[RMDB]
RNA sequence: GGGAACGACUCGAGUAGAGUCGAAAAGGGGGUGAGGUUGCUGGCAACUUGUCGUGAGCCGCUCCGGGUCGAGGGUGAGGUGAGCUACCGGGUGCCGUCGCUGUCACUGAGCGAUGAAGCCGUUGAGCGAUUAAGUACUGUUCGCAGUACUUAAUCGAAAAGAAACAACAACAACAAC
Reactivity to 2A3 in 0.01 (KOAc 150mM, MgCl2 10mM, bicine 150mM(pH8.5), 24C), signal-to-noise 9, nucleotides 027 to 126: g060g000g010g010g020u080g030a070g020g040u100u090g040c060u060g030g000c010a060a080c080u100u150g070u110c060g040u050g060a030g020c000c000g020c020u010c020c010g030g000g010u090c080g040a090g020g030g020u120g030a040g000g050u070g040a030g010c020u050a060c020c030g030g000g020u050g030c020c010g010u020c020g000c020u020g050u100c010a030c170u100g050a010g010c020g010a020u060g060a130a040g040c020c030g030u030u080g030a040g050
Reactivity to DMS in 0.01 (KOAc 150mM, MgCl2 10mM, bicine 150mM(pH8.5), 24C), signal-to-noise 8, nucleotides 027 to 126: g000g010g010g000g020u020g000a060g000g020u000u000g010c060u000g010g010c040a110a090c090u020u020g010u020c070g010u010g020a120g010c040c020g000c040u000c040c050g000g000g010u010c090g000a080g000g000g010u010g000a090g010g020u010g010a100g000c050u020a050c050c040g000g010g010u010g000c190c030g010u010c010g000c020u000g000u020c170a080c150u020g000a060g000c020g000a040u010g000a140a170g010c030c040g010u010u010g010a110g010